[RMDB]
RNA sequence: GGGAACGACUCGAGUAGAGUCGAAAAGAAGGUGAAUGGAGGACUCACAUCUUAAAUGGUGGCAGGCAAAAGAGAGCUUGUGUGGGGAGCUCCCAUUUAUAAAACCAUCAGAUCUCAUAAGCCUUAUUCACUAUCAUGAGAACAGCAUGGAAACGACCUAAUUGACUUCUUUCGAGAAGUCAAUUAGAAAAGAAACAACAACAACAAC
Reactivity to DMS in 0.01 (KOAc 150mM, MgCl2 10mM, bicine 150mM(pH8.5), 24C), signal-to-noise 2, nucleotides 027 to 156: g030a100a220g000g010u010g020a050a040u000g040g020a100g000g020a110c020u020c070a120c020a050u010c030u000u000a050a040a070u010g010g080u000g010g000c060a040g000g020c090a010a040a110a160g020a130g000a020g010c020u000u000g030u040g020u010g080g020g050g000a060g020c050u000c010c000c020a110u010u020u000a100u000a120a090a120a110c020c010a020u000c030a180g000a110u000c010u000c020a070u000a150a090g000c020c040u000u000a120u000u000c070a000c010u010a110u020c040a070u010g000a060g010a070a100c070a100g010c050a050u000g000g000a070a040a130c020g000a130c040
Reactivity to 2A3 in 0.01 (KOAc 150mM, MgCl2 10mM, bicine 150mM(pH8.5), 24C), signal-to-noise 6, nucleotides 027 to 156: g040a050a040g040g010u030g020a030a040u080g040g020a040g010g020a060c010u030c040a050c030a070u040c040u130u190a170a180a100u090g000g000u030g020g000c040a020g030g000c020a060a040a130a060g070a030g000a010g010c030u070u030g030u010g010u030g050g010g000g010a010g020c010u050c000c000c010a020u030u160u060a150u080a030a120a010a020c040c000a000u030c020a020g050a160u020c030u020c070a050u070a160a060g020c000c000u080u080a080u080u070c010a010c040u080a100u180c040a040u070g030a000g030a100a060c040a030g080c040a020u060g040g020a100a080a020c030g090a040c010
An RNA of 207 nucleotides, treated with DMS and 2A3 and read out base by base.
For 2A3, 4,065 sequencing reads were counted.
The reactions ran in a buffer of 150 mM KOAc, 10 mM MgCl2 and 150 mM bicine (pH 8.5), at 24 C.
For DMS the reverse transcriptase was MarathonRT.
For DMS, 2,403 sequencing reads were counted.